[RMDB]
RNA sequence: GGGAACGACUCGAGUAGAGUCGAAAAGAAAGAAAGAAAGCGGUUGGGUGGGUCCAUCGACAGUCGUGGCGUAUUCGGACGCUUUACCACGACGCGAGGAAAUAGCGAGACCGACCACCCCCUUUAACAGAGGUAUAGUAGUUCGCUACUAUACCAACAAUAAUUCAAUGUUCGCAUUGAAUUAUUGAAAAGAAACAACAACAACAAC
Reactivity to 2A3 in 0.01 (KOAc 150mM, MgCl2 10mM, bicine 150mM(pH8.5), 24C), signal-to-noise 3, nucleotides 027 to 156: g030a020a070a010g030a050a080a000g060a020a070a010g070c110g060g070u150u110g100g030g010u050g040g030g020u000c020c030a110u010c030g040a060c030a040g010u010c000g000u010g000g020c030g030u080a170u060u170c090g100g040a010c040g010c040u120u090u090a050c020c000a000c000g000a000c010g000c000g020a030g000g030a020a140a060u060a050g060c050g010a050g020a050c030c010g040a020c010c010a010c010c000c000c000c010u010u030u080a130a080c110a050g050a040g100g010u010a000u000a000g000u000a000g010u020u040c150g000c100u000a000c000u000a000u000a000c000c000a000a000
Reactivity to DMS in 0.01 (KOAc 150mM, MgCl2 10mM, bicine 150mM(pH8.5), 24C), signal-to-noise 3, nucleotides 027 to 156: g010a130a100a100g010a160a120a160g010a100a090a080g010c130g030g010u010u010g010g020g040u000g000g020g010u010c030c030a090u000c030g020a110c070a090g010u000c020g020u000g000g030c010g020u000a140u000u000c070g000g000a170c100g010c100u000u000u000a050c000c020a020c010g000a030c000g020c080g000a070g000g010a070a090a100u010a080g000c040g000a140g010a110c030c000g000a040c020c020a030c010c000c000c020c030u010u000u000a100a160c120a120g000a160g000g010u000a010u000a000g010u000a020g010u000u010c300g020c000u000a030c000u000a000u000a000c010c000a010a040